[RMDB]
The record gives the reactivity of an RNA of 177 nucleotides to DMS and 2A3. The 2A3 profile rests on 1,254 reads. The data come from the RNA Mapping Database (RMDB), library OK1LIB. The DMS profile rests on 914 reads. The RNA was probed in 150 mM KOAc, 10 mM MgCl2 and 150 mM bicine (pH 8.5) at 24 C. DMS adducts were read by reverse transcription with MarathonRT.

RNA sequence: GGGAACGACUCGAGUAGAGUCGAAAAGUAAUAAGCAAUAUUAAUUUAGCAAUUUCUAUCUGUAUAUGGAGCAUUAUUACAUAUACGACGUUCGUCAUAUCUACUAUAAUGCAAAAUAGACUAUAGCCGUCAGUACUGGUUUCGACCAGUACUGACGAAAAGAAACAACAACAACAAC
Reactivity to DMS in 0.01 (KOAc 150mM, MgCl2 10mM, bicine 150mM(pH8.5), 24C), signal-to-noise 1, nucleotides 027 to 126: g000u000a020a010u070a180a130g040c100a080a020u010a130u000u000a140a050u020u000u000a010g000c010a010a050u040u010u000c000u000a000u010c090u000g000u000a030u000a040u000g000g000a300g000c000a100u000u010a000u000u040a170c190a010u020a000u000a010c040g000a010c060g010u050u060c080g020u000c000a030u020a000u060c120u010a140c120u000a060u000a000a000u000g000c000a060a210a040a000u000a010g000a060c080u000a000u000a120g030c300
Reactivity to 2A3 in 0.01 (KOAc 150mM, MgCl2 10mM, bicine 150mM(pH8.5), 24C), signal-to-noise 3, nucleotides 027 to 126: g090u120a060a170u140a170a050g050c010a040a030u010a050u230u250a140a170u180u100u190a070g060c030a070a140u100u050u020c010u030a080u000c060u040g010u010a000u000a000u070g020g020a020g000c010a020u000u020a030u050u130a010c030a040u000a000u040a030c060g000a050c020g080u110u300c080g040u030c010a060u050a000u110c000u000a000c020u020a030u000a050a050u010g010c000a000a050a140a000u050a000g050a100c020u070a050u040a130g010c050